Chemical mapping of a 207-nucleotide RNA with 2A3. The data come from the RNA Mapping Database (RMDB), library OK3TST. Reactivities are given for positions 27 through 156. For 2A3 the reverse transcriptase was SuperScript II with manganese. Conditions: 150 mM KOAc, 10 mM MgCl2 and 150 mM bicine (pH 8.5), 24 C.

RNA sequence: GGGAACGACUCGAGUAGAGUCGAAAAGAGGAAGAGAACAGGUUUGGGAAAUUUCGCACAGCCAAGAGUUUGGUAGGAAUUGUUAGGAAGUCAGGCAGCAAUUCCUCCAGAUUAAUAAGAAGCGAGCCUUAGCUACUCUAAGCAGUGUUAACAGCUAGUGAUUUACGCCGUUCGCGGCGUAAAUCACAAAAGAAACAACAACAACAAC
Reactivity to 2A3 in 0.01 (KOAc 150mM, MgCl2 10mM, bicine 150mM(pH8.5), 24C), signal-to-noise 2, nucleotides 027 to 156: g040a000g020g010a020a000g010a030g020a050a070c050a110g040g050u070u090u030g090g040g000a050a170a090u110u160u090c030g000c000a040c020a090g000c040c050a060a050g020a020g090u030u140u060g010g010u120a000g000g010a010a020u000u050g010u000u030a030g010g090a150a070g090u090c040a020g080g140c010a000g000c010a020a030u010u000c010c000u000c000c000a000g010a000u020u050a040a100u090a070a000g150a050a000g030c030g030a000g000c000c020u000u030a000g000c010u030a030c000u000c000u080a070a000g030c030a010g040u010g070u180u150a030a040c000a030g020c020u060a020